[RMDB]
RNA sequence: GGGAACGACUCGAGUAGAGUCGAAAAGGGUAUGCAACUUUUGCAUACAAAGGUCUCCUGGGCUGGUUCUAAAAUCAUUGCUGUUAUCUACAGCGGCAGGGAGUCUCUAAUAUUCCCAUCGGGAACCGUGCCUUGCUGUUCGCAGCAAGGAAAAGAAACAACAACAACAAC
Reactivity to 2A3 in 0.01 (KOAc 150mM, MgCl2 10mM, bicine 150mM(pH8.5), 24C), signal-to-noise 9, nucleotides 027 to 129: g120g010g000u000a010u010g000c010a060a080c110u160u170u290u080g000c000a010u010a000c010a010a070a000g030g000u010c010u000c000c000u040g010g210g000c020u040g010g030u040u010c070u120a070a080a080a130u160c100a100u100u150g000c010u000g030u100u130a140u150c070u060a020c000a010g010c000g010g000c010a010g010g010g010a030g020u000c020u000c000u050a100a170u100a100u100u020c010c000c000a030u110c060g040g000g010a010a020c010c010g020u070g040
Reactivity to DMS in 0.01 (KOAc 150mM, MgCl2 10mM, bicine 150mM(pH8.5), 24C), signal-to-noise 9, nucleotides 027 to 129: g040g040g020u020a010u000g000c000a030a130c290u060u070u080u000g020c020a000u000a000c020a050a120a070g010g010u020c000u020c010c010u000g020g050g010c030u000g000g030u030u020c060u000a050a070a090a080u070c120a030u050u040g050c000u000g020u030u050a130u060c150u060a040c040a060g020c060g020g000c040a300g000g000g000a040g000u000c040u000c040u000a070a100u050a120u010u000c000c000c000a110u040c090g000g000g000a020a010c030c000g020u070g020
The data come from the RNA Mapping Database (RMDB), library 15KLIB. Structure probing data (2A3 and DMS) for a 170-nucleotide construct. The reactions ran in a buffer of 150 mM KOAc, 10 mM MgCl2 and 150 mM bicine (pH 8.5), at 24 C. 2A3 adducts were read by reverse transcription with SuperScript II with manganese. Values cover nucleotides 27 to 129.